[RMDB]
RNA sequence: GGGAACGACUCGAGUAGAGUCGAAAACUCGUCAGGACUGGACCACUGGACGCAGCACUCUGGUCACCAUAGCGGGUUGUUCUGCACAUGUCCCGUGGCUAGGUAUACCGCGUUGGGGUAAGACACAGCUUGAGAUAAAGUUCGCUUUAUCUCAAGCAAAAGAAACAACAACAACAAC
Reactivity to DMS in 0.01 (KOAc 150mM, MgCl2 10mM, bicine 150mM(pH8.5), 24C), signal-to-noise 3, nucleotides 027 to 126: c030u000c040g010u000c100a120g010g000a140c050u000g000g020a090c020c050a030c020u000g010g010a030c040g010c050a030g000c100a020c010u000c020u000g030g010u010c080a110c140c080a100u010a230g000c050g000g000g000u000u010g000u000u010c010u000g000c040a120c180a150u020g010u000c010c010c060g030u000g000g010c030u000a050g000g000u000a120u010a090c040c030g010c110g010u000u000g010g000g000g010u000a070a110g000a070c060a080c190a130
Reactivity to 2A3 in 0.01 (KOAc 150mM, MgCl2 10mM, bicine 150mM(pH8.5), 24C), signal-to-noise 3, nucleotides 027 to 126: c010u010c000g030u060c060a080g070g100a140c030u040g040g080a280c010c000a010c000u020g000g000a020c030g000c030a010g050c010a030c010u000c020u070g170g180u160c060a080c090c010a100u180a090g080c030g020g020g020u030u080g010u090u060c030u050g010c000a030c030a090u280g050u040c000c000c000g010u010g010g000c030u030a010g000g020u080a050u060a130c040c010g060c050g020u010u120g020g010g020g000u050a080a000g030a020c050a010c000a100